[RMDB]
RNA sequence: GGGAACGACUCGAGUAGAGUCGAAAAACUCCAGAAUCCCAAUGCUACCUCCGAGUGCAAGUUCUGCUCCUUGACUGUUGCGGACCAGUACCUUGCAGGGAGCGAGAUUGAAUGGUCCCAGCGCUGGCGGAAUUUCGGGAUAAUCUGGGCCUAUGUCGCUCGUAAUCUCUUUCGAGAGAUUACGAGCAAAAGAAACAACAACAACAAC
Reactivity to 2A3 in 0.01 (KOAc 150mM, MgCl2 10mM, bicine 150mM(pH8.5), 24C), signal-to-noise 1, nucleotides 027 to 156: a000c040u040c000c000a010g020a000a000u010c100c050c020a000a060u090g030c040u210a030c050c030u150c120c000g150a100g090u040g000c000a080a000g010u000u000c010u030g010c000u080c080c000u220u100g180a230c030u150g070u140u070g000c160g000g000a000c000c000a010g010u120a030c000c040u020u040g000c010a000g100g080g030a000g000c010g020a080g010a030u300u240g160a000a070u040g020g000u010c020c000c000a020g000c000g000c000u090g090g000c070g000g040a080a080u040u100u120c090g000g000g000a000u010a050a100u020c000u000g000g020g030c010c000u100a200u110g230u110c060